[RMDB]
RNA sequence: GGGAACGACUCGAGUAGAGUCGAAAAAGCAAGGCUGUCCUCCCAGGGCUGCCACUACCAGAGACCUGGGGGAGCUGAAUUCCGAACAGUGAUGGUGACACUCAGCACCUUUGCCACAGCCGGGGGGUCAUAAGGAGCAGUUCGCUGCUCCUUAUGAAAAAGAAACAACAACAACAAC
Reactivity to 2A3 in 0.01 (KOAc 150mM, MgCl2 10mM, bicine 150mM(pH8.5), 24C), signal-to-noise 1, nucleotides 027 to 126: a000g080c050a070a030g030g010c010u000g030u040c010c010u010c020c010c000a000g010g020g000c000u040g120c030c020a070c030u080a040c000c060a040g010a040g060a270c010c000u010g000g000g010g000g000a020g020c010u020g020a050a090u060u070c010c010g000a070a030c030a060g040u030g060a040u040g020g000u020g050a020c020a040c130u100c030a060g000c010a030c030c000u040u040u060g090c020c020a020c020a000g000c010c000g000g000g020g000g000g020
Reactivity to DMS in 0.01 (KOAc 150mM, MgCl2 10mM, bicine 150mM(pH8.5), 24C), signal-to-noise 4, nucleotides 027 to 126: a030g040c060a110a080g030g020c010u000g020u000c170c000u000c010c000c000a040g000g000g010c030u000g000c080c090a080c130u020a090c230c070a080g000a070g000a060c030c010u000g010g010g000g000g000a150g000c010u010g000a080a120u000u000c030c010g010a090a100c150a060g010u000g000a040u000g010g000u000g010a090c060a080c130u010c140a090g000c030a060c020c030u000u000u000g000c040c110a050c030a030g000c000c010g000g000g000g000g000g000